RNA sequence: GGGAACGACUCGAGUAGAGUCGAAAAGAAGAGCAGGCAGAUAAUCUUGUGCAGUAUGCAUGCUCAUAACUCCACAUGAAGAAAGGCAGCAAAAGAAUAACUGCCACUGCACAAGUGGAGCCGCAGAGGAUAUCCGUAGUUUCGACUACGGAUAUCCAAAAGAAACAACAACAACAAC
Reactivity to DMS in 0.01 (KOAc 150mM, MgCl2 10mM, bicine 150mM(pH8.5), 24C), signal-to-noise 2, nucleotides 027 to 126: g010a090a090g020a120g000c010a120g020g040c000a070g040a080u040a100a090u050c020u000u000g000u000g020c010a020g000u000a050u030g000c040a020u000g090c010u000c000a060u000a030a020c140u000c030c060a080c130a020u020g000a080a120g000a040a120a120g000g000c000a000g000c280a030a110a120a140g020a130a120u020a110a260c000u000g000c010c000a190c010u010g000c010a000c030a010a020g000u000g030g020a070g020c070c030g010c080a080g040a220
Reactivity to 2A3 in 0.01 (KOAc 150mM, MgCl2 10mM, bicine 150mM(pH8.5), 24C), signal-to-noise 4, nucleotides 027 to 126: g090a030a030g000a000g000c030a080g030g010c000a010g030a170u160a150a040u170c010u010u000g010u020g000c000a010g050u080a050u160g020c050a020u060g000c010u040c050a020u090a070a040c030u040c060c010a070c010a090u090g080a020a050g070a130a080a040g010g000c000a010g000c050a090a080a060a010g200a130a110u100a070a010c000u000g000c000c000a000c000u010g000c000a000c010a020a000g020u020g000g010a020g010c050c010g000c050a030g020a020